[RMDB]
RNA sequence: GGGAACGACUCGAGUAGAGUCGAAAAAGCCUGACCAGCAUGGUGAAACCCCGUCUCUACUAAAAUACAAAAAUUAGCUGGGUGUGGUGGUGUGUGCCUGUAAUCCCAGCUACUCGGGAGGCUGAGACGAAAAUUAAUAGUUCGCUAUUAAUUUUCGAAAAGAAACAACAACAACAAC
Reactivity to 2A3 in 0.01 (KOAc 150mM, MgCl2 10mM, bicine 150mM(pH8.5), 24C), signal-to-noise 2, nucleotides 027 to 126: a010g050c000c000u010g030a050c030c010a010g090c020a050u120g030g000u020g030a130a100a080c010c020c010c030g020u000c010u000c010u040a170c030u050a080a030a080a220u180a070c110a010a140a040a070a090u150u030a020g010c010u000g000g030g000u040g020u040g000g050u060g020g090u070g020u050g050u090g120c020c000u070g080u110a060a040u050c000c000c000a000g000c010u010a020c000u030c010g040g010g010a020g040g000c030u060g040a010g040a050
Reactivity to DMS in 0.01 (KOAc 150mM, MgCl2 10mM, bicine 150mM(pH8.5), 24C), signal-to-noise 4, nucleotides 027 to 126: a110g010c010c020u010g010a080c060c040a110g020c060a060u000g000g030u000g000a050a080a110c040c020c010c030g010u000c020u000c010u010a070c050u020a030a030a050a060u000a080c080a030a040a030a060a070u000u000a030g000c010u000g000g000g020u000g020u000g010g030u010g010g020u000g000u010g010u010g020c020c000u000g010u000a080a080u000c000c000c000a020g000c010u000a010c050u000c070g000g010g010a090g010g000c070u000g000a070g010a180